[RMDB]
RNA sequence: GGGAACGACUCGAGUAGAGUCGAAAACGGAUGCCAGCGGAAGGGCUUCCUGAGCGUCGCCGUAGCGCACCGCCGCCGCGAACAGCGCAGCCUUGCCCUGGGCGUAGCCAUACAGCGUGCCUUUGGCGGUCGUCUCCGAUUUCGAUCGGAGACGACCAAAAGAAACAACAACAACAAC
Reactivity to 2A3 in 0.01 (KOAc 150mM, MgCl2 10mM, bicine 150mM(pH8.5), 24C), signal-to-noise 1, nucleotides 027 to 126: c020g110g000a020u090g000c020c000a100g020c040g130g030a160a010g040g030g000c000u030u060c080c000u040g100a010g000c040g090u180c030g030c010c080g030u070a030g010c010g010c060a030c000c030g040c000c000g010c030c000g090c000g020a060a030c110a060g000c000g000c090a000g020c030c010u040u130g010c000c000c000u000g000g000g000c040g060u070a050g030c060c000a050u090a070c040a010g020c020g050u070g010c000c000u050u120u100g080g010c150